[RMDB]
RNA sequence: GGGAACGACUCGAGUAGAGUCGAAAAGACCCUUUAUGGAACUGUCAUUCAACCCCAAAAAUCUAGUGCAAAUAUUGUCUUAAUUACUUAGGCUAAAAGAAAUAAGUAUUAAAGCGGGAGAAGGCAUAACAGCAGCUACGCUUCGGCGUAGCUGCAAGGUAAUGUAGACGUUCGCGUCUACAUUACCAAAAGAAACAACAACAACAAC
Reactivity to 2A3 in 0.01 (KOAc 150mM, MgCl2 10mM, bicine 150mM(pH8.5), 24C), signal-to-noise 1, nucleotides 027 to 156: g000a000c000c010c140u010u150u030a190u060g000g000a020a050c050u000g010u000c000a120u060u010c110a180a220c030c000c040c060a020a120a030a000a210u150c170u080a080g020u050g090c070a060a170a110u040a110u180u030g000u010c030u010u140a080a070u210u010a150c030u040u070a000g000g080c000u110a150a180a030a000g010a000a090a020u070a170a040g000u000a030u070u000a110a000a000g030c070g000g090g000a040g000a080a000g000g000c010a000u030a110a010c010a050g000c000a000g050c000u000a000c000g000c000u000u050c200g100g000c000g000u000a000g000c000u000g000c000a000a000